[RMDB]
RNA sequence: GGGAACGACUCGAGUAGAGUCGAAAACAGUUGCAUUACCUGCUCCUGAAAGAUGGGCACGCCCAGAGUUCGGUCCAGCGCCUCUUUCACCUCCUCACUGGGAUAGCUCACUGGCUCCUUGCCAUUGCUACCAAGUUCACUUCGGUGAACUUGGUAGAAAAGAAACAACAACAACAAC
Reactivity to DMS in 0.01 (KOAc 150mM, MgCl2 10mM, bicine 150mM(pH8.5), 24C), signal-to-noise 2, nucleotides 027 to 126: c090a060g020u000u000g030c010a010u000u010a030c120c080u000g030c040u010c020c030u000g000a090a090a050g010a110u010g010g000g010c050a050c170g010c030c010c020a080g000a060g020u000u010c060g020g010u000c020c040a050g000c110g020c020c020u020c030u000u000u000c060a110c050c020u000c020c000u000c040a100c090u000g010g000g000a110u000a080g010c020u000c050a080c070u000g000g010c000u000c050c050u010u000g010c000c030a100u000u000g000
Reactivity to 2A3 in 0.01 (KOAc 150mM, MgCl2 10mM, bicine 150mM(pH8.5), 24C), signal-to-noise 1, nucleotides 027 to 126: c000a040g000u080u120g030c080a040u080u120a100c020c020u020g020c010u000c000c010u010g060a100a110a000g080a060u060g000g020g080c050a030c090g080c030c010c010a070g010a010g100u070u140c020g010g010u000c010c030a030g030c050g050c040c000u060c000u030u100u070c040a060c000c000u000c000c000u050c010a040c030u030g030g000g030a120u050a040g030c000u040c030a030c010u000g050g000c000u000c000c010u010u060g030c000c000a040u000u100g000